An RNA of 207 nucleotides, treated with 2A3 and DMS and read out base by base.
Source: RMDB library M2RFPK, as collected in RNAgym.

[RMDB]
RNA sequence: GGGAACGACUCGAGUAGAGUCGAAAAGAAGGGUGAAAGCCCUUGAUACUGUAGUGGAAAUUAUAAAUAAGAAGAGUUCUGAGUUGCUUAAGCAGAACUAAAAUAAAAAGACAAGCAUUACUACAAACAUGGCGAGGUAAGUUCGCUUACCUCGCAACUAAUGUUGAGAGUUCGCUCUCAACAUUAGAAAAGAAACAACAACAACAAC
Reactivity to 2A3 in 0.01 (KOAc 150mM, MgCl2 10mM, bicine 150mM(pH8.5), 24C), signal-to-noise 3, nucleotides 027 to 156: g070a000a000g010g000g000u020g010a090a020a040g000c000c010c000u000u020g020a030u040a060c060u040g020u040a020g020u030g040g050a060a040a070u160u140a120u210a290a120a020u140a080a030g060a110a040g020a000g060u000u000c000u000g010a020g020u070u050g050c000u070u010a110a000g000c000a000g000a020a000c070u080a010a000a010a000u100a000a100a000a000a000g010a020c040a010a010g000c000a010u080u130a050c030u030a020c030a030a160a020c040a140u110g090g010c010g000a000g000g010u020a010a000g000u040u060c130g010c070u000u000a000c000c000u000c000g000c000a000a000
Reactivity to DMS in 0.01 (KOAc 150mM, MgCl2 10mM, bicine 150mM(pH8.5), 24C), signal-to-noise 1, nucleotides 027 to 156: g000a060a010g040g020g030u010g000a190a130a300g000c000c010c010u000u000g000a120u000a110c060u000g000u000a030g020u000g000g010a090a050a150u000u000a000u040a060a040a130u020a080a130g000a080a170g010a060g010u000u000c010u000g000a100g010u000u000g000c010u000u000a060a130g000c000a030g000a030a000c000u000a030a050a080a060u000a060a070a080a110a120g010a170c050a020a100g040c030a080u020u000a070c000u010a070c050a050a080a050c090a020u010g040g010c000g030a020g040g030u000a020a020g070u000u010c300g000c020u000u000a000c020c010u020c000g050c000a010a010
The 2A3 profile rests on 2,700 reads.
For DMS, 2,410 sequencing reads were counted.
The reactions ran in a buffer of 150 mM KOAc, 10 mM MgCl2 and 150 mM bicine (pH 8.5), at 24 C.
DMS adducts were read by reverse transcription with MarathonRT.
For 2A3 the reverse transcriptase was SuperScript II with manganese.